[RMDB]
RNA sequence: GGGAACGACUCGAGUAGAGUCGAAAACGCCGGCUGGGCAACAUUCCGAGGGGACCGUCCUCCUCGGUAAUGGCGAAUGGGACCCCAGAUUUCCUUCCUAUUGAGAAGGAAAUAACUGGCACUCCCUGUAUCAGGCUGUUCGCAGCCUGAAAAAGAAACAACAACAACAAC
Reactivity to 2A3 in 0.01 (KOAc 150mM, MgCl2 10mM, bicine 150mM(pH8.5), 24C), signal-to-noise 6, nucleotides 027 to 129: c100g000c000c010g030g010c000u020g000g020g000c020a040a020c000a020u030u010c020c000g000a000g020g030g000g030a100c020c080g100u180c040c000u010c010c000u010c000g000g000u000a010a020u020g020g000c080g070a070a070u120g030g000g070a110c020c010c000c000a000g010a020u000u000u000c000c000u000u000c020c000u190a300u170u300g120a300g000a030a000g010g000a000a000a000u000a000a010c010u020g000g000c000a030c040u020c010c010c000u000g020u030a100
Reactivity to DMS in 0.01 (KOAc 150mM, MgCl2 10mM, bicine 150mM(pH8.5), 24C), signal-to-noise 3, nucleotides 027 to 129: c240g020c100c040g000g000c030u020g000g030g050c080a110a150c000a030u000u000c020c010g030a060g020g000g010g030a120c170c110g000u050c070c010u050c020c010u000c030g050g000u020a000a000u030g030g030c190g020a130a070u030g000g000g000a120c180c230c010c020a000g020a280u000u000u000c000c020u030u030c000c050u080a190u030u080g000a180g030a020a020g020g060a000a000a000u000a120a060c000u000g000g000c030a150c070u020c020c000c000u030g040u020a090